[RMDB]
RNA sequence: GGGAACGACUCGAGUAGAGUCGAAAAAGUAAGACCCAAGCAUAGAGAGCCAGGCACAAAAACACAGGCGGGGUGGGACACAUGCCUUCUUGGAGUACGUGGGUCAUUGGCGUGGGGGGUUACAGCGUCCUUACGACACCUUCGGGUGUCGUAAGGAAAAAGAAACAACAACAACAAC
Reactivity to 2A3 in 0.01 (KOAc 150mM, MgCl2 10mM, bicine 150mM(pH8.5), 24C), signal-to-noise 2, nucleotides 027 to 126: a000g200u150a040a040g080a000c000c000c000a000a010g070c000a100u090a090g140a000g000a000g060c020c050a000g030g040c070a020c060a090a070a000a170a000c030a020c050a130g010g010c000g000g000g000g070u190g020g070g000a030c080a030c000a110u100g000c000c000u090u070c070u130u070g050g020a080g140u070a120c100g030u130g020g010g010u030c020a100u040u200g010g070c100g000u030g020g020g000g000g080g000u070u080a030c010a000g060c000g030
Reactivity to DMS in 0.01 (KOAc 150mM, MgCl2 10mM, bicine 150mM(pH8.5), 24C), signal-to-noise 2, nucleotides 027 to 126: a020g020u000a090a000g010a140c020c090c010a110a020g000c100a120u000a170g010a040g000a190g040c020c000a060g060g000c050a050c160a160a060a030a140a020c050a020c150a050g000g000c080g000g000g020g080u000g010g000g000a160c080a070c070a090u060g000c040c010u000u020c120u020u010g000g040a050g000u040a030c080g020u080g000g000g000u000c070a080u020u000g000g000c090g000u050g000g000g060g000g000g000u010u000a020c080a010g040c150g000

Structure probing data (2A3 and DMS) for a 177-nucleotide construct.
The DMS profile rests on 1,616 reads.
2A3 adducts were read by reverse transcription with SuperScript II with manganese.